[RMDB]
An RNA of 177 nucleotides, treated with DMS and 2A3 and read out base by base. Reactivities are given for positions 27 through 126. For 2A3 the reverse transcriptase was SuperScript II with manganese. For 2A3, 4,815 sequencing reads were counted. The RNA was probed in 150 mM KOAc, 10 mM MgCl2 and 150 mM bicine (pH 8.5) at 24 C.
RNA sequence: GGGAACGACUCGAGUAGAGUCGAAAAGGAUGAACUGACCCCAGGUUCAUGAGAAACACUGUUUCUUGUUUUAAGGUGUUGAGCUUUGGGUAGUUCAUUAUUCAUCAAAAGCUGUCAGCGCAGAUGCGACUUUGAUCAGAUUCGUCUGAUCAAAGUCAAAAGAAACAACAACAACAAC
Reactivity to DMS in 0.01 (KOAc 150mM, MgCl2 10mM, bicine 150mM(pH8.5), 24C), signal-to-noise 4, nucleotides 027 to 126: g000g010a010u000g000a000a010c000u000g000a070c060c000c010c050a070g010g010u000u000c000a040u010g010a140g000a150a040a050c010a100c100u010g000u000u000u010c100u010u010g020u010u010u010u010a120a180g000g010u010g010u000u010g010a020g000c010u000u000u000g010g010g010u000a030g000u000u000c040a010u000u000a060u000u000c060a090u020c080a060a060a100a170g010c030u000g000u000c080a100g030c150g010c060a060g000a070u000g010c270
Reactivity to 2A3 in 0.01 (KOAc 150mM, MgCl2 10mM, bicine 150mM(pH8.5), 24C), signal-to-noise 5, nucleotides 027 to 126: g100g010a010u010g000a010a000c020u060g260a120c010c020c010c000a000g010g010u010u000c000a040u120g100a060g090a070a040a010c110a040c120u120g090u080u140u040c080u120u140g210u180u230u060u140a110a060g090g000u100g040u060u060g000a000g020c000u020u020u010g000g000g010u000a000g010u000u010c000a000u000u000a030u000u060c010a080u040c020a000a110a040a050g050c030u070g070u210c060a020g050c020g000c110a020g020a090u050g070c060